This 177-nucleotide RNA was probed chemically with DMS and 2A3. The DMS profile rests on 4,892 reads. The RNA was probed in 150 mM KOAc, 10 mM MgCl2 and 150 mM bicine (pH 8.5) at 24 C. Values cover nucleotides 27 to 126. Reactivities are rounded to 0.1 and cut off at 0 and 3.

RNA sequence: GGGAACGACUCGAGUAGAGUCGAAAAGUCUAGCGAUUUAGGGAUCCGAUCCGGGUCGCAGAACUCAACUGCAUGAGUAGACACGCAAGUCGCGUAUUGGCCGACCGACCAAGGAUCUGCUAGACGAAUGCGUAUAGUACUUCGGUACUAUACGCAUAAAAGAAACAACAACAACAAC
Reactivity to DMS in 0.01 (KOAc 150mM, MgCl2 10mM, bicine 150mM(pH8.5), 24C), signal-to-noise 5, nucleotides 027 to 126: g000u000c000u000a010g010c010g010a130u010u000u010a140g010g000g000a030u000c020c030g000a110u010c080c120g050g010g010u000c020g020c040a120g000a100a060c070u000c060a050a070c120u010g010c190a160u010g000a040g030u000a120g000a110c100a010c040g010c040a080a130g030u010c190g010c020g000u000a120u000u000g030g020c110c020g010a020c040c000g010a060c050c040a110a160g000g000a010u010c010u010g020c000u000a000g000a010c000g000a050
Reactivity to 2A3 in 0.01 (KOAc 150mM, MgCl2 10mM, bicine 150mM(pH8.5), 24C), signal-to-noise 5, nucleotides 027 to 126: g000u010c000u010a010g000c030g100a120u040u130u300a200g070g020g030a010u030c020c010g020a020u050c070c060g110g010g000u010c000g000c030a000g020a040a030c020u000c040a050a090c080u260g040c090a140u050g020a020g020u030a040g050a030c050a010c050g020c050a130a140g180u180c050g010c020g020u030a070u130u170g090g000c080c030g010a030c000c000g020a040c050c030a120a030g010g000a010u000c030u060g000c000u000a000g000a000c000g010a010